[RMDB]
RNA sequence: GGGAACGACUCGAGUAGAGUCGAAAAGUAUGGUGCCUUUAUGGAUAAACAAGUGCACCAAGUUCAGUUAACAGACAAAUACUGCAGUGUUAAUGUAGUAGCUUGGCUUUACGCAGCAAUACUUAAUUAAGGACUGGCUUCGGCCAGUCCAAAAGAAACAACAACAACAAC
Reactivity to DMS in 0.01 (KOAc 150mM, MgCl2 10mM, bicine 150mM(pH8.5), 24C), signal-to-noise 3, nucleotides 027 to 129: g020u000a050u010g000g040u000g010c000c010u020u060u000a140u030g040g080a150u100a050a060a090c160a030a020g030u040g030c010a170c030c000a000a070g010u000u020c030a100g000u020u000a080a030c150a050g010a120c060a040a050a090u040a090c030u000g030c010a000g030u040g060u040u070a050a040u030g000u000a000g030u000a040g030c080u000u000g010g010c030u040u060u030a090c030g060c000a080g010c140a010a040u090a090c040u030u000a060a060u010u050a090a100
Reactivity to 2A3 in 0.01 (KOAc 150mM, MgCl2 10mM, bicine 150mM(pH8.5), 24C), signal-to-noise 3, nucleotides 027 to 129: g000u000a000u080g000g000u000g030c000c000u090u020u070a150u110g160g020a070u140a070a090a000c000a010a050g000u080g020c000a000c000c000a010a000g000u000u050c030a000g000u000u000a070a000c000a010g030a030c010a040a060a000u070a060c040u000g000c000a000g030u020g010u230u230a000a010u040g030u020a000g020u000a000g080c070u000u000g000g010c000u140u050u070a030c140g050c040a010g050c000a020a020u020a100c000u000u150a040a050u120u050a110a000
This 170-nucleotide RNA was probed chemically with DMS and 2A3. For DMS the reverse transcriptase was MarathonRT. 2A3 adducts were read by reverse transcription with SuperScript II with manganese. Source: RMDB library 15KLIB, as collected in RNAgym. The RNA was probed in 150 mM KOAc, 10 mM MgCl2 and 150 mM bicine (pH 8.5) at 24 C.